[RMDB]
RNA sequence: GGGAACGACUCGAGUAGAGUCGAAAAGAUAUGGAUGCCUCAAAAUACCGGCACAGUGCAAGUAAACACUCGGAAACGAGUGUCUUAUGAUGACCACUGUGCCGGUAUUUUGAGGGCAUCCUAAGUCCGUAAUGAUAUCGUUCGCGAUAUCAUUACGAAAAGAAACAACAACAACAAC
Reactivity to DMS in 0.01 (KOAc 150mM, MgCl2 10mM, bicine 150mM(pH8.5), 24C), signal-to-noise 4, nucleotides 027 to 126: g000a110u010a300u010g000g000a000u000g000c010c000u010c010a010a010a020a000u000a010c000c000g000g010c000a010c000a010g020u010g020c010a070a130g000u000a010a040a030c000a010c000u000c010g000g000a130a110a290c000g010a010g000u000g000u000c130u000u010a020u000g000a100u010g010a210c300c000a020c000u000g010u000g000c000c010g010g020u000a000u000u000u000u000g010a040g010g010g010c000a010u000c000c000u000a010a060g010u010c050